[RMDB]
The data come from the RNA Mapping Database (RMDB), library OK2TRN. An RNA of 177 nucleotides, treated with 2A3 and DMS and read out base by base. DMS adducts were read by reverse transcription with MarathonRT.
RNA sequence: GGGAACGACUCGAGUAGAGUCGAAAAUGCUAGCUGCUCCUAGGCCAUAGAAGUGUCAGGUUUGCUUGCUAACCAGCAGUCCUGAACACAAGUCACAGCAGGUGAGAAUAGGAAUUAGAAGGAAGUGUCAUCCCUCGUCAUUCGUGACGAGGGAUGAAAAAGAAACAACAACAACAAC
Reactivity to 2A3 in 0.01 (KOAc 150mM, MgCl2 10mM, bicine 150mM(pH8.5), 24C), signal-to-noise 1, nucleotides 027 to 126: u070g040c000u010a030g020c000u070g000c000u040c000c000u030a050g010g030c010c000a080u050a160g170a260a090g070u000g000u040c030a010g010g090u000u060u000g000c030u010u040g050c000u030a090a070c050c050a000g000c000a000g010u070c000c010u000g190a290a000c000a000c060a090a020g040u040c010a000c010a040g050c040a020g040g180u080g040a080g000a000a050u070a050g040g040a000a120u070u010a160g030a120a000g130g080a090a110g050u000g040
Reactivity to DMS in 0.01 (KOAc 150mM, MgCl2 10mM, bicine 150mM(pH8.5), 24C), signal-to-noise 2, nucleotides 027 to 126: u000g010c030u000a120g000c020u000g010c030u000c040c010u000a070g030g020c040c060a070u000a130g040a070a130g020u000g010u010c020a020g030g030u000u010u010g030c030u010u000g000c070u010a050a100c170c130a070g020c010a030g010u000c000c010u000g010a050a010c010a010c030a110a080g010u000c040a080c040a060g000c050a030g020g000u000g010a070g020a090a050u000a090g010g010a100a050u000u010a090g010a090a060g000g000a050a070g030u010g010